An RNA of 177 nucleotides, treated with 2A3 and DMS and read out base by base. The 2A3 profile rests on 2,214 reads. DMS adducts were read by reverse transcription with MarathonRT. Reactivities are given for positions 27 through 126. The RNA was probed in 150 mM KOAc, 10 mM MgCl2 and 150 mM bicine (pH 8.5) at 24 C.
[RMDB]
RNA sequence: GGGAACGACUCGAGUAGAGUCGAAAAUUCAUAAGAUUAACUAUUUACCAGUGGUAAUAAAAAUAAAAGUAAGUCAAUGGACAACAACAAUACUGAAACUCUAAAUGUUGAUAUUUUGAGUCAUGCCCAGAAAACUGUUUUUCGAAACAGUUUUCUGAAAAGAAACAACAACAACAAC
Reactivity to 2A3 in 0.01 (KOAc 150mM, MgCl2 10mM, bicine 150mM(pH8.5), 24C), signal-to-noise 4, nucleotides 027 to 126: u040u010c000a000u060a190a050g020a010u070u040a030a030c020u080a110u180u080u050a080c030c030a090g070u100g140g000u060a070a020u080a110a130a050a010a020u200a080a150a020a000g060u070a080a030g000u020c020a020a180u040g120g030a030c040a060a010c010a010a020c020a090a130u060a180c040u070g050a080a100a030c000u000c040u120a070a100a060u070g040u100u030g110a060u040a050u090u040u010u050g010a010g040u020c000a020u150g000c000c000
Reactivity to DMS in 0.01 (KOAc 150mM, MgCl2 10mM, bicine 150mM(pH8.5), 24C), signal-to-noise 2, nucleotides 027 to 126: u010u000c000a000u010a030a070g000a030u000u010a080a070c020u040a110u010u010u000a010c050c080a170g010u020g000g030u000a020a080u030a030a070a080a160a080u090a060a050a100a050g000u000a020a070g000u000c020a090a020u060g000g010a010c070a060a060c140a000a030c080a030a020u000a020c080u010g030a070a080a060c140u020c090u030a040a030a130u050g000u030u000g020a110u010a090u030u000u000u010g010a030g000u010c090a030u030g020c100c010